[RMDB]
RNA sequence: GGGAACGACUCGAGUAGAGUCGAAAAUUCCAUUUGAGUAUCCUGAAAACGGGCUAUUCAGCAUGGAACGUACAUAUUAAAUAGUAGGAGUGCAUAGUGGCCCGUAUAGCAGGCAUUAACAUUCCUGAAAACGUGAAAAGGUUCGCCUUUUCACGAACUACAGAUCAGUGUUCGCACUGAUCUGUAGAAAAGAAACAACAACAACAAC
Reactivity to DMS in 0.01 (KOAc 150mM, MgCl2 10mM, bicine 150mM(pH8.5), 24C), signal-to-noise 1, nucleotides 027 to 156: u010u000c000c000a070u010u030u000g020a020g050u020a070u010c000c020u000g000a080a060a170a180c050g030g000g030c000u000a060u000u000c010a170g030c070a030u000g000g030a100a050c080g010u020a230c040a140u000a160u000u000a090a060a200u000a140g020u000a060g010g010a170g020u000g030c000a250u000a080g030u000g010g000c010c010c000g000u010a020u000a150g030c030a030g000g000c030a030u000u010a100a060c040a100u000u000c040c000u000g020a050a030a050a200c000g030u030g000a030a020a020a030g030g000u000u020c300g010c020c000u010u000u000u000c000a000c020g030a010a080
Reactivity to 2A3 in 0.01 (KOAc 150mM, MgCl2 10mM, bicine 150mM(pH8.5), 24C), signal-to-noise 3, nucleotides 027 to 156: u040u000c030c020a040u100u050u070g010a030g020u050a080u140c000c010u030g000a030a000a040a100c020g010g000g000c000u020a010u080u040c050a000g020c010a000u010g030g070a150a030c030g100u050a010c000a030u210a100u160u300a100a200a130u190a110g060u040a000g000g130a050g020u000g010c050a040u040a040g020u030g060g010c000c010c040g010u050a010u010a030g030c010a020g010g000c000a020u010u070a030a000c010a010u110u090c000c000u020g100a080a100a020a020c020g000u000g030a000a000a000a000g020g030u030u130c240g110c000c010u000u000u000u000c000a000c000g000a000a000